[RMDB]
RNA sequence: GGGAACGACUCGAGUAGAGUCGAAAAUGCAUGUCUAAGUAUAAACAGAUUACAGUGAAACUGCGAAUGGCUCAUUAAAACAGUUAUUGUUUGCUUGGAGUAUUUUUCCACCGGAUAUCCGUGGAAAUUUCCACAAACACUUCGGUGUUUGUGGAAAAAAAGAAACAACAACAACAAC
Reactivity to DMS in 0.01 (KOAc 150mM, MgCl2 10mM, bicine 150mM(pH8.5), 24C), signal-to-noise 1, nucleotides 027 to 126: u070g000c080a090u050g000u010c030u010a030a060g000u000a050u040a080a050a130c120a060g030a070u010u030a010c080a020g000u020g000a060a060a100c050u000g000c010g000a070a040u030g000g030c030u000c030a060u090u060a020a020a050a060c230a110g010u000u070a050u000u000g000u000u000u000g010c060u010u000g000g000a030g000u000a030u000u000u000u000u000c000c030a000c050c160g000g010a270u070a040u000c040c030g130u000g000g000a000a060a010